[RMDB]
RNA sequence: GGGAACGACUCGAGUAGAGUCGAAAAUACGCUGGUAGCAGCAAGUAGCAGCUCAAUCCGCAGAUGAGCGGAAUAUACAAAUGAGAAUGGAUCUCGAUAGAGCUGCUACAAUCGAGACCAUUAGAGAAAUGAGUCCUGAUUUCGAUCAGGACUCAUUAAAAGAAACAACAACAACAAC
Reactivity to DMS in 0.01 (KOAc 150mM, MgCl2 10mM, bicine 150mM(pH8.5), 24C), signal-to-noise 3, nucleotides 027 to 126: u050a040c150g000c030u000g000g010u030a110g000c000a050g050c070a210a240g050u000a000g000c030a000g000c000u000c000a230a090u010c010c000g010c000a190g020a220u090g030a170g000c010g000g000a050a100u020a040u040a120c180a030a080a130u020g000a110g020a010a090u000g000g000a170u000c000u000c000g010a040u020a110g000a010g010c000u010g000c000u000a000c030a020a030u010c020g000a000g030a040c000c000a010u020u020a130g010a190g000a080
Reactivity to 2A3 in 0.01 (KOAc 150mM, MgCl2 10mM, bicine 150mM(pH8.5), 24C), signal-to-noise 3, nucleotides 027 to 126: u230a010c050g000c020u000g000g090u170a160g280c000a000g010c000a060a030g000u000a000g010c000a000g000c000u020c020a020a100u040c030c010g000c000a010g040a300u180g090a110g070c000g000g000a050a000u100a000u020a030c210a050a150a060u190g040a090g090a120a000u040g000g080a100u000c010u000c000g000a020u020a080g000a030g000c000u000g000c020u000a000c000a000a020u000c010g010a010g000a000c000c000a020u060u060a010g110a030g040a080